[RMDB]
This 177-nucleotide RNA was probed chemically with 2A3 and DMS.
The DMS profile rests on 1,892 reads.
Source: RMDB library TTRDES, as collected in RNAgym.
Values cover nucleotides 27 to 126.
The 2A3 profile rests on 3,168 reads.
RNA sequence: GGGAACGACUCGAGUAGAGUCGAAAAAAAAGAUAUGGAGUGGGAACUACAGCAAGAAGUAGCUUGGAUUUAGAGGUCGGAAACGACCUCUUGUCAGCUACCACUGCUGCCCACUCCUAAGUCAAAAGUCUAUUAGAAAGUUCGCUUUCUAAUAGACAAAAGAAACAACAACAACAAC
Reactivity to 2A3 in 0.01 (KOAc 150mM, MgCl2 10mM, bicine 150mM(pH8.5), 24C), signal-to-noise 2, nucleotides 027 to 126: a000a000a000a010g050a010u070a020u030g000g000a010g010u020g000g000g000a080a020c170u300a050c300a000g030c020a040a000g060a100a010g050u000a000g030c050u070u270g140g020a020u300u190u010a010g000a000g020g000u000c020g050g020a060a080a000c010g020a000c030c000u000c000u010u010g000u000c000a010g000c000u000a000c000c020a020c010u000g000c000u010g010c020c010c000a000c000u000c000c000u000a020a010g010u000c000a000a020a000a060
Reactivity to DMS in 0.01 (KOAc 150mM, MgCl2 10mM, bicine 150mM(pH8.5), 24C), signal-to-noise 2, nucleotides 027 to 126: a080a130a110a140g000a010u010a300u020g000g000a030g030u000g040g000g000a150a050c070u020a300c010a010g000c000a020a050g000a150a200g010u000a020g010c010u010u000g010g000a010u000u020u000a000g030a010g030g030u000c000g020g000a040a030a080c000g000a010c000c000u000c010u000u000g000u000c000a090g020c000u000a010c000c020a300c090u000g000c000u010g000c000c000c000a000c010u010c000c000u000a000a050g000u000c030a080a070a080a110